[RMDB]
RNA sequence: GGGAACGACUCGAGUAGAGUCGAAAAUGAUGCAUGAUACUGGGAAAUGGAAAGAUCUCAAUAUGAAGUAUGUAUUAACGUCGUGGCGAGAUUACGUAGUCCUCUCGAAUGAACACGAGGAUUUUCAGGUAAAUAGGUAGUUCGCUACCUAUUUACCAAAAGAAACAACAACAACAAC
Reactivity to DMS in 0.01 (KOAc 150mM, MgCl2 10mM, bicine 150mM(pH8.5), 24C), signal-to-noise 9, nucleotides 027 to 126: u010g010a050u000g010c030a030u010g010a050u000a030c060u000g000g000g010a030a060a180u010g010g020a100a120a080g000a200u000c000u000c010a020a240u010a010u000g000a070a040g010u000a040u000g020u010a060u000u000a070a110c050g010u000c020g010u000g000g010c190g000a030g000a030u000u010a050c100g010u000a090g010u000c050c080u000c020u000c050g010a130a100u010g010a080a090c100a040c060g010a040g010g010a090u000u000u000u000c070a120
Reactivity to 2A3 in 0.01 (KOAc 150mM, MgCl2 10mM, bicine 150mM(pH8.5), 24C), signal-to-noise 9, nucleotides 027 to 126: u110g020a010u030g000c020a010u080g020a020u050a080c030u020g000g010g040a020a090a100u090g060g100a090a060a050g030a030u010c010u010c000a020a010u050a020u100g040a060a020g050u080a030u120g130u030a080u100u150a130a040c050g060u010c010g000u020g020g000c010g000a010g000a020u020u030a020c040g040u080a020g050u020c010c010u000c000u000c020g080a100a130u220g050a110a020c040a010c060g000a020g050g010a020u080u030u030u090c050a030

An RNA of 177 nucleotides, treated with DMS and 2A3 and read out base by base. For 2A3 the reverse transcriptase was SuperScript II with manganese. For 2A3, 20,497 sequencing reads were counted. Values cover nucleotides 27 to 126.